[RMDB]
RNA sequence: GGGAACGACUCGAGUAGAGUCGAAAAGAAGGCAUGAACAAAUAGACUAAUUGAGAGAAGAUAGAGACCAGGGAUGACGCUGGAGAGGAGACAUAAGAAUACCUGAAUGAGAGCUGUGGAUUUUCUGAAUUCAGAGUCAUUUGAGUCAAGCAGUUCAAUCAUUAUUAUGCUUCGGCAUAAUAAUGAUAAAAGAAACAACAACAACAAC
Reactivity to 2A3 in 0.01 (KOAc 150mM, MgCl2 10mM, bicine 150mM(pH8.5), 24C), signal-to-noise 5, nucleotides 027 to 156: g050a020a010g020g000c040a030u120g040a060a020c030a050a090a080u140a060g060a040c030u090a100a090u180u130g030a050g010a010g020a070a030g010a020u100a050g060a010g020a040c020c030a010g020g020g020a010u030g010a020c040g000c080u030g020g010a010g000a010g030g010a020g030a010c030a040u120a060a040g040a080a020u060a120c020c030u040g060a030a030u080g020a050g000a020g070c050u050g020u080g050g060a050u090u040u070u040c030u070g060a090a070u070u080c020a030g020a020g110u020c010a020u010u070u110g030a020g010u030c030a030a010g010c020a010g030u060u030c030a020
Reactivity to DMS in 0.01 (KOAc 150mM, MgCl2 10mM, bicine 150mM(pH8.5), 24C), signal-to-noise 3, nucleotides 027 to 156: g010a120a010g010g030c030a080u010g030a090a120c040a030a110a100u000a090g030a110c110u010a070a120u000u010g000a140g000a140g010a040a070g010a100u010a100g010a090g010a070c030c020a110g020g000g020a110u010g020a080c060g010c050u000g010g000a100g000a070g010g020a090g000a060c070a100u000a040a080g030a100a080u010a040c040c020u000g020a060a070u000g000a170g000a100g000c030u000g030u030g000g010a070u010u000u010u010c080u010g010a070a090u000u010c030a080g010a070g000u010c040a060u000u000u000g010a090g000u000c020a030a120g030c030a110g000u010u000c020a100
This 207-nucleotide RNA was probed chemically with 2A3 and DMS. For DMS, 4,679 sequencing reads were counted. Source: RMDB library OK3TST, as collected in RNAgym. Conditions: 150 mM KOAc, 10 mM MgCl2 and 150 mM bicine (pH 8.5), 24 C. For 2A3, 3,879 sequencing reads were counted.